[RMDB]
Background:
Structure probing data (DMS and 2A3) for a 207-nucleotide construct. For 2A3, 2,160 sequencing reads were counted. Conditions: 150 mM KOAc, 10 mM MgCl2 and 150 mM bicine (pH 8.5), 24 C. For DMS, 2,771 sequencing reads were counted.
RNA sequence: GGGAACGACUCGAGUAGAGUCGAAAACUCGGAUUGUGGCAGCCGAUAGCACCCUAGAUCUAGUGAAUCAUGGCGAGCCCGGAAGAGAGGCUCCUAGACGAGCUCAAUAACGUAAUUGUGUCAUUUCUGUGUGACUCUGGGUCUCUGGAAGUGGAGAGUCGUGUAAAUGAUUCGUCAUUUACACGACAAAAGAAACAACAACAACAAC
Reactivity to DMS in 0.01 (KOAc 150mM, MgCl2 10mM, bicine 150mM(pH8.5), 24C), signal-to-noise 1, nucleotides 027 to 156: c020u010c030g020g000a120u010u030g030u010g050g060c080a130g000c060c000g020a100u000a170g060c030a100c020c000c040u000a180g030a110u000c060u000a070g020u000g010a180a080u000c010a110u010g020g000c010g010a150g010c020c000c010g060g000a080a090g060a140g000a170g010g020c040u000c000c010u000a110g000a150c060g000a110g030c010u010c040a070a120u000a060a110c040g020u000a060a110u000u020g020u020g040u000c010a070u010u010u000c060u010g020u000g020u010g000a070c020u000c010u010g010g050g020u000c000u000c050u000g010g010a020a060g020u000g030g010a140g000a150
Reactivity to 2A3 in 0.01 (KOAc 150mM, MgCl2 10mM, bicine 150mM(pH8.5), 24C), signal-to-noise 4, nucleotides 027 to 156: c020u000c010g020g020a120u050u120g060u120g020g030c030a000g020c020c020g050a060u060a060g030c030a050c010c010c010u030a070g010a110u050c040u050a020g040u020g080a030a040u070c080a060u090g050g020c040g010a000g030c010c020c010g050g030a120a020g040a010g020a050g010g020c000u000c000c000u020a060g010a070c010g010a020g010c000u010c050a040a110u140a100a020c090g080u090a120a100u120u140g040u030g030u080c010a000u040u110u090c070u060g100u040g030u030g060a020c020u020c060u080g070g000g020u030c020u010c000u050g020g030a070a010g010u030g060g020a050g010a020
For 2A3 the reverse transcriptase was SuperScript II with manganese.